The record gives the reactivity of an RNA of 207 nucleotides to 2A3. Conditions: 150 mM KOAc, 10 mM MgCl2 and 150 mM bicine (pH 8.5), 24 C. It was measured as part of the RMDB library VIROID.
RNA sequence: GGGAACGACUCGAGUAGAGUCGAAAAUCGAGCGCUCUCCCGCUCCUCGGAUGGGCCGUUGCCGGCGAACGAGCCCGAAGUGCGAGUGGGGGAGAACUCCCGAGAGUUGGGAGACAGAAAGAGAGCGAAUGUCCUCGGGAGGAUCCCCCAAGCUGCCGUCACAAUAAGAGUUCGCUCUUAUUGUGACAAAAGAAACAACAACAACAAC
Reactivity to 2A3 in 0.01 (KOAc 150mM, MgCl2 10mM, bicine 150mM(pH8.5), 24C), signal-to-noise 2, nucleotides 027 to 156: u080c010g010a000g000c000g000c000u000c000u000c010c010c000g020c010u000c010c010u000c010g050g050a070u160g140g010g000c010c020g030u000u040g130c100c030g040g020c110g030a000a030c010g010a070g030c010c010c010g000a020a010g010u020g070c160g010a000g000u040g000g000g000g000g000a000g000a000a000c000u000c010c000c010g030a040g000a000g060u120u300g030g090g020a050g000a010c030a000g170a030a180a010g150a000g060a020g040c070g050a150a080u100g010u070c000c000u000c000g020g010g000a010g030g000a060u040c010c000c000c000c010a030a030g030c050u030g030c040c030